[RMDB]
Conditions: 150 mM KOAc, 10 mM MgCl2 and 150 mM bicine (pH 8.5), 24 C. An RNA of 177 nucleotides, treated with 2A3 and DMS and read out base by base. DMS adducts were read by reverse transcription with MarathonRT. The DMS profile rests on 3,000 reads.

RNA sequence: GGGAACGACUCGAGUAGAGUCGAAAACUGUCAUCUCGAAGGGGAUCGCAUCUAUCUCUUCCUCGAGGGUCCCCUUGGUGAGAAGGCGUGCCACCCUCACGAGGAGAUCCCUCCGGAUCUUCGUCCGAUUCUAGGUCUUCUUCGGAAGACCUAGAAUAAAAGAAACAACAACAACAAC
Reactivity to 2A3 in 0.01 (KOAc 150mM, MgCl2 10mM, bicine 150mM(pH8.5), 24C), signal-to-noise 2, nucleotides 027 to 126: c030u010g000u020c010a040u000c020u010c020g070a010a000g030g000g000g010a010u020c050g010c210a190u040c060u110a140u070c060u060c000u140u100c010c040u070c050g030a040g000g000g050u030c010c040c100c010u010u040g060g000u070g040a020g020a020a020g010g000c040g040u030g020c000c020a040c010c010c010u040c030a070c040g050a030g020g010a010g010a020u050c000c010c010u070c010c060g010g010a000u000c010u010u020c010g130u040c040c050g000
Reactivity to DMS in 0.01 (KOAc 150mM, MgCl2 10mM, bicine 150mM(pH8.5), 24C), signal-to-noise 3, nucleotides 027 to 126: c050u010g010u000c060a050u000c010u000c010g000a060a020g000g010g000g000a010u010c030g030c110a100u000c120u010a120u010c060u000c040u000u010c070c060u010c190g000a070g010g000g020u000c010c000c000c010u000u010g010g000u010g040a000g020a030a030g030g010c030g020u000g010c070c080a120c020c010c010u010c060a100c150g000a110g010g000a040g000a010u010c010c010c110u000c270c180g010g000a040u090c050u000u000c020g010u010c070c120g000